[RMDB]
RNA sequence: GGGAACGACUCGAGUAGAGUCGAAAAGGGUAUGUUGACUGUAUGUAAACUGACUAUGAAGGAAGCAAUGGAACUUUAUAAAAUAAAUGAUGACGUUGUUAUACCUAAGACAAUCAUGAAUGAACCACACAAUGUGGGCAUUCGUGCCCACAUUGUGAAAAGAAACAACAACAACAAC
Reactivity to DMS in 0.01 (KOAc 150mM, MgCl2 10mM, bicine 150mM(pH8.5), 24C), signal-to-noise 2, nucleotides 027 to 126: g020g000g020u000a040u090g040u000u000g000a070c080u000g000u010a000u020g030u010a070a060a090c090u030g000a150c020u010a010u040g000a080a000g000g000a060a020g010c030a010a000u020g020g020a020a060c060u000u000u000a040u100a050a020a080a200u010a010a010a030u050g000a130u000g020a180c130g010u000u000g000u030u000a100u000a130c040c030u000a170a110g000a030c070a050a130u020c000a050u000g000a040a070u000g000a010a070c100c030a180
Reactivity to 2A3 in 0.01 (KOAc 150mM, MgCl2 10mM, bicine 150mM(pH8.5), 24C), signal-to-noise 1, nucleotides 027 to 126: g090g000g020u190a110u200g040u040u040g300a240c150u050g000u170a060u040g110u020a030a000a160c090u020g010a000c060u010a060u200g060a030a000g020g040a000a000g000c000a000a130u020g000g000a000a030c030u000u160u050a270u100a060a140a000a000u140a020a010a120u130g200a130u000g000a110c000g000u000u000g000u000u000a110u070a060c000c000u040a000a220g060a010c010a060a060u060c000a000u040g060a000a000u130g060a050a030c200c000a010